[RMDB]
RNA sequence: GGGAACGACUCGAGUAGAGUCGAAAAUGGAUGCACCAUGAUGAAAUAUGGUAUUCACUUACUUCUUUCUCCUUGUUUACAAUAAUCUUAUAGCUUAAGGCCAGCACGUAACUUACUAAUGCGAGUACAAGAGGGUUUUCUUCGGAAAACCCUCUUGAAAAGAAACAACAACAACAAC
Reactivity to 2A3 in 0.01 (KOAc 150mM, MgCl2 10mM, bicine 150mM(pH8.5), 24C), signal-to-noise 2, nucleotides 027 to 126: u080g010g060a020u090g050c030a060c000c000a010u010g030a040u040g120a050a120a080u300a110u040g000g000u010a010u020u010c000a000c050u040u140a050c000u110u050c000u020u040u000c010u000c000c000u020u050g060u040u070u060a010c090a090a170u260a090a070u050c020u090u050a060u050a150g040c040u070u100a050a000g060g010c020c000a030g000c010a010c070g130u120a060a020c010u040u070a030c000u070a160a120u040g080c000g080a000g030u010a020
Reactivity to DMS in 0.01 (KOAc 150mM, MgCl2 10mM, bicine 150mM(pH8.5), 24C), signal-to-noise 1, nucleotides 027 to 126: u030g000g010a060u000g000c080a000c030c000a040u020g030a110u010g040a110a130a050u070a050u000g000g030u000a010u000u020c030a060c070u010u070a150c090u000u030c030u000u020u000c050u000c030c030u000u020g010u000u000u070a050c160a060a160u040a060a050u010c050u050u000a030u000a030g000c060u000u000a130a180g030g010c020c010a120g000c000a030c090g040u010a010a040c110u000u000a030c090u020a110a050u030g040c110g000a100g050u000a140
Overview
Structure probing data (2A3 and DMS) for a 177-nucleotide construct. DMS adducts were read by reverse transcription with MarathonRT. The 2A3 profile rests on 791 reads. In probing experiments dimethyl sulfate is read out at A N1 and C N3, which are open when not base-paired. The RNA was probed in 150 mM KOAc, 10 mM MgCl2 and 150 mM bicine (pH 8.5) at 24 C.